The record gives the reactivity of an RNA of 207 nucleotides to 2A3.
For 2A3 the reverse transcriptase was SuperScript II with manganese.
Reactivities are given for positions 27 through 156.
Conditions: 150 mM KOAc, 10 mM MgCl2 and 150 mM bicine (pH 8.5), 24 C.
Source: RMDB library OK3TST, as collected in RNAgym.

[RMDB]
RNA sequence: GGGAACGACUCGAGUAGAGUCGAAAAAUAUUCUGUCCAGCGUUAUCAAUGCGUUUGUGCAAAUGGGUAUAGAUUGGGCAAAAUCAGCCAUCAUGGGUGCAGCAGGAAUGAGUGCAGCUUCUGCGGCGACAAUAGCUCAAGCCGCGGCAAUAUCAGCACCGAUCUCACUAUUCGUAGUGAGAUCGGUAAAAGAAACAACAACAACAAC
Reactivity to 2A3 in 0.01 (KOAc 150mM, MgCl2 10mM, bicine 150mM(pH8.5), 24C), signal-to-noise 2, nucleotides 027 to 156: a000u130a090u150u070c030u020g000u090c000c070a040g010c010g100u090u060a050u220c080a300a020u130g020c020g110u090u110u070g110u040g050c030a070a060a100u160g030g020g010u090a050u000a140g070a070u070u050g000g000g000c020a030a030a000a180u050c040a000g000c030c020a040u080c020a060u200g030g000g010u010g000c020a040g000c010a000g040g120a120a080u130g020a040g070u050g010c070a070g000c000u010u090c030u200g010c010g010g000c000g010a000c040a120a130u150a130g030c070u050c070a060a000g000c000c000g000c000g000g000c000a030a030u010a020u300c010a000g070c040